The data come from the RNA Mapping Database (RMDB), library M2RFPK.
Structure probing data (2A3) for a 207-nucleotide construct.
The reactions ran in a buffer of 150 mM KOAc, 10 mM MgCl2 and 150 mM bicine (pH 8.5), at 24 C.

RNA sequence: GGGAACGACUCGAGUAGAGUCGAAAAGAAAGAAAGAAGCGAGCUGGCGCAGCCGCACGGGCAACCGUCAAUCCAGCACUUCACUAGUCUUGUCGUUCUGACAGGACAUCCAUCAACCCACCGGGAAAAAAGGACUACAGCUUCGGCUGUAGUCCAACUCUUGGUUAGUGUUCGCACUAACCAAGAGAAAAGAAACAACAACAACAAC
Reactivity to 2A3 in 0.01 (KOAc 150mM, MgCl2 10mM, bicine 150mM(pH8.5), 24C), signal-to-noise 1, nucleotides 027 to 156: g020a000a000a010g070a030a120a010g000a020a000g010c070g070a040g040c030u030g040g000c080g000c080a050g070c160c080g090c030a040c020g000g000g040c050a060a070c000c010g010u060c030a040a030u040c030c000a000g030c010a020c010u070u020c010a050c070u020a040g000u010c000u000u010g000u000c010g090u240u290c110u300g000a000c010a000g000g000a010c000a000u060c020c000a050u130c000a010a110c000c000c030a050c120c130g000g000g020a070a020a000a120a070a050g040g030a050c000u000a000c000a010g000c010u000u270c260g140g020c000u000g000u000a020g010u000c010c000a000a000
Reactivities are given for positions 27 through 156.